[RMDB]
RNA sequence: GGGAACGACUCGAGUAGAGUCGAAAAGGGGAAGUUUGAGAUCAAGGCACCUACAGAUUACAUGUUAGAUAAGGGCUCCCUGCUUCAUAGAUGGCAUCUUCCUGCUGUUUUUCAUGUGGCAGAAGGGGAUGCCUAUAGGUUUCGACCUAUAGGCAUCAAAAGAAACAACAACAACAAC
Reactivity to DMS in 0.01 (KOAc 150mM, MgCl2 10mM, bicine 150mM(pH8.5), 24C), signal-to-noise 5, nucleotides 027 to 126: g020g010g000g010a090a040g020u000u000u000g020a100g010a080u010c060a070a100g000g010c060a060c090c020u010a090c100a100g000a120u000u010a080c120a090u010g010u000u010a080g010a100u010a080a130g010g000g010c040u000c020c030c010u000g000c050u000u010c050a040u000a070g010a070u020g000g010c030a040u010c100u000u000c100c070u000g010c030u000g010u010u000u010u010u000c150a050u010g000u010g000g010c010a020g000a080a070g000g000g000
Reactivity to 2A3 in 0.01 (KOAc 150mM, MgCl2 10mM, bicine 150mM(pH8.5), 24C), signal-to-noise 3, nucleotides 027 to 126: g010g020g010g000a020a050g040u100u120u120g120a110g020a030u080c040a050a050g040g020c010a050c040c000u070a030c020a030g060a040u070u060a050c070a070u150g050u120u160a050g020a100u090a080a060g050g020g000c010u000c010c010c000u010g020c010u000u040c010a020u030a070g050a060u040g020g000c010a020u010c050u090u030c020c020u010g020c010u020g050u010u020u010u040u090c080a060u120g010u040g040g000c020a000g040a080a040g020g010g010
Source information: This 177-nucleotide RNA was probed chemically with DMS and 2A3. For DMS, 7,107 sequencing reads were counted. Source: RMDB library OK2TRN, as collected in RNAgym. Values cover nucleotides 27 to 126. 2A3 is a SHAPE reagent: it acylates the 2'-hydroxyl of flexible nucleotides of all four kinds. For 2A3 the reverse transcriptase was SuperScript II with manganese. For DMS the reverse transcriptase was MarathonRT. The reactions ran in a buffer of 150 mM KOAc, 10 mM MgCl2 and 150 mM bicine (pH 8.5), at 24 C.